[RMDB]
RNA sequence: GGGAACGACUCGAGUAGAGUCGAAAAACAACUGAAAAUACCACUCACCCAUUAACCACGGAGUUAAACGGAUGAGUGACUAUCAUCACGGCGUGCAGGUGCUGGAGAUUAACGACGGCACCCGCGUCAUUUCCACCGUAUCCACUGCCAUUGUCGACUACUAGCCGCAUUUCGAUGCGGCUAGUAGAAAAGAAACAACAACAACAAC
Reactivity to 2A3 in 0.01 (KOAc 150mM, MgCl2 10mM, bicine 150mM(pH8.5), 24C), signal-to-noise 1, nucleotides 027 to 156: a000c070a020a000c070u070g050a070a000a040a090u130a030c030c000a000c000u000c000a000c060c040c000a000u040u020a000a000c000c000a130c300g110g060a230g010u000u000a000a050a000c050g000g010a130u080g030a000g000u120g030a000c020u010a030u050c030a000u080c010a030c140g030g000c000g000u010g050c160a010g070g000u000g000c000u010g150g020a010g010a150u300u170a050a170c130g040a000c000g000g020c000a000c000c000c010g000c000g040u020c000a010u000u000u000c020c070a100c090c020g030u090a050u140c050c020a080c040u080g080c000c060a110u160u130g120u080c000g000a020